[RMDB]
RNA sequence: GGGAACGACUCGAGUAGAGUCGAAAACGACGAGGUCGAGACCCUCGCCGAAUACGAUCCUUUCGAGCACGGGCCGGCUCAUUGAGCCGGCUUCUCCUUCCGGAGAUGCCGCUUGCGAGCCGCAGGCCAGCACCCUAUGGUUCGCCAUAGGGUGCUGAAAAGAAACAACAACAACAAC
Reactivity to DMS in 0.01 (KOAc 150mM, MgCl2 10mM, bicine 150mM(pH8.5), 24C), signal-to-noise 2, nucleotides 027 to 126: c010g000a010c040g030a020g000g020u010c080g010a160g010a150c300c000c000u000c000g000c000c000g030a080a050u010a300c050g010a020u000c030c000u000u010u020c000g000a010g000c050a100c070g040g000g020c010c000g010g000c020u000c000a130u020u050g020a010g080c100c050g020g080c030u000u000c010u000c000c000u010u050c280c080g040g000a010g000a000u000g010c010c000g010c000u000u010g030c120g000a010g000c040c010g020c210a080g000g010c060
Reactivity to 2A3 in 0.01 (KOAc 150mM, MgCl2 10mM, bicine 150mM(pH8.5), 24C), signal-to-noise 4, nucleotides 027 to 126: c010g030a000c000g000a010g040g040u180c140g140a090g120a300c040c010c000u000c000g020c000c000g030a040a020u190a110c020g010a020u100c010c000u010u030u050c030g010a000g000c040a020c080g000g060g000c020c000g000g000c000u020c030a170u170u300g010a010g030c130c030g030g000c010u000u000c000u000c010c000u160u220c100c200g010g000a010g000a010u020g020c010c000g010c010u010u030g030c030g040a010g040c010c050g030c010a000g030g040c000